Structure probing data (2A3 and DMS) for a 177-nucleotide construct.
RNA sequence: GGGAACGACUCGAGUAGAGUCGAAAACUUCACAAAAUUGAACAGGACAUAAAGAUGUGAAGGAAGAAGCUGAUGACUUGCAUUGCAAUAAAAUUAGAAAUGUCCAGUUACCAAAGAUAUCCACAGGGCCGUACUUAUUAUUCGUAAUAAGUACGGCAAAAGAAACAACAACAACAAC
Reactivity to 2A3 in 0.01 (KOAc 150mM, MgCl2 10mM, bicine 150mM(pH8.5), 24C), signal-to-noise 2, nucleotides 027 to 126: c000u020u000c010a000c020a060a150a180a190u110u100g000a050a020c050a080g020g070a010c010a100u240a100a170a000g130a090u050g000u010g000a010a010g020g000a050a050g070a080a000g070c030u040g020a040u020g020a040c010u030u000g070c020a220u030u190g000c010a050a070u090a150a120a090a030u080u040a030g040a080a100a000u030g010u010c000c000a000g040u010u010a070c010c010a000a100a030g050a070u060a060u100c060c070a050c010a070g100g100
Reactivity to DMS in 0.01 (KOAc 150mM, MgCl2 10mM, bicine 150mM(pH8.5), 24C), signal-to-noise 3, nucleotides 027 to 126: c020u000u000c000a040c010a030a050a190a150u000u000g000a090a070c050a100g020g010a040c030a010u010a060a080a090g010a230u010g010u000g000a040a030g000g010a090a130g010a120a080g000c060u000g010a030u000g000a150c220u010u000g000c020a120u000u000g000c030a020a040u000a040a050a130a060u000u010a080g000a090a150a040u000g000u000c010c020a080g020u000u000a070c110c100a040a080a030g010a100u000a050u000c060c060a070c180a150g010g010
Values cover nucleotides 27 to 126.
Source: RMDB library OK2TST, as collected in RNAgym.
Conditions: 150 mM KOAc, 10 mM MgCl2 and 150 mM bicine (pH 8.5), 24 C.